[RMDB]
RNA sequence: GGGAACGACUCGAGUAGAGUCGAAAAGAUAUGGAGUAGCUACCCACCGAACUACAUCGUUCCAUCGGAAACGAUGGAAUGAUGCGAGGCUACUCCUAAGUCAAAGAUAAACCUUCGGGUUUAUCAACUGAAAGAAAUUGUUCGCAAUUUCUUUCAGAAAAGAAACAACAACAACAAC
Reactivity to DMS in 0.01 (KOAc 150mM, MgCl2 10mM, bicine 150mM(pH8.5), 24C), signal-to-noise 3, nucleotides 027 to 126: g000a100u020a150u000g000g000a010g010u000a010g020c010u000a090c040c030c040a300c090c030g000a060a050c050u010a200c000a000u000c000g000u000u000c000c010a020u000c010g010g000a100a060a160c010g010a000u010g010g010a030a000u000g000a000u000g000c020g010a110g000g000c000u000a000c000u000c000c000u000a010a060g000u000c130a070a100a140g000a010u000a000a010a000c000c000u000u020c200g040g010g000u000u000u000a000u000c000a100a190
Reactivity to 2A3 in 0.01 (KOAc 150mM, MgCl2 10mM, bicine 150mM(pH8.5), 24C), signal-to-noise 3, nucleotides 027 to 126: g080a040u190a220u260g000g000a010g000u010a000g000c020u080a220c040c020c010a010c020c050g050a080a090c100u210a030c300a010u000c010g020u000u000c000c000a000u000c000g000g040a060a060a000c030g000a000u000g000g000a000a000u010g010a000u000g000c020g010a010g000g010c000u000a000c000u030c010c000u010a060a000g070u040c100a220a130a040g000a010u000a010a000a000c000c000u070u090c300g140g000g000u010u030u020a000u010c010a000a040